Structure probing data (2A3 and DMS) for a 177-nucleotide construct. Values cover nucleotides 27 to 126. 2A3 adducts were read by reverse transcription with SuperScript II with manganese. Reactivities are rounded to 0.1 and cut off at 0 and 3. For DMS, 1,742 sequencing reads were counted.
RNA sequence: GGGAACGACUCGAGUAGAGUCGAAAAGGAGGCAAGUUCGCUUGCCUCCAAAGAAGCUCAAAUUGACGCAUACAUCCGCGUCAUCGCGAGCAAGCGAGGAAAAAACCGUGAACUUCGGUUCACGGAAGACGUUACACAUGUUCGCAUGUGUAACGUCAAAAGAAACAACAACAACAAC
Reactivity to 2A3 in 0.01 (KOAc 150mM, MgCl2 10mM, bicine 150mM(pH8.5), 24C), signal-to-noise 2, nucleotides 027 to 126: g010g000a000g010g010c000a000a020g030u020u040c090g060c050u020u000g000c000c000u010c010c000a010a000a010g020a000a000g020c000u030c000a040a050a100u060u030g000a000c010g000c010a000u140a300c060a200u230c150c100g030c010g000u000c010a010u010c000g030c050g030a000g000c000a010a000g090c060g120a150g120g000a140a110a000a000a010a030c000c000g000u000g000a000a000c000u030u050c210g060g000u010u010c000a010c040g000g000a010a010
Reactivity to DMS in 0.01 (KOAc 150mM, MgCl2 10mM, bicine 150mM(pH8.5), 24C), signal-to-noise 3, nucleotides 027 to 126: g010g000a000g000g020c030a000a000g020u000u000c170g010c000u000u000g040c010c000u020c010c010a020a040a120g010a070a110g010c000u000c000a030a300a090u000u000g000a000c000g000c010a110u010a150c300a160u000c290c180g000c000g000u000c000a000u010c100g000c300g000a010g040c000a060a100g040c090g000a010g010g000a000a060a040a050a110a090c000c000g000u000g000a000a000c000u000u050c210g030g000u000u000c000a000c020g000g000a010a030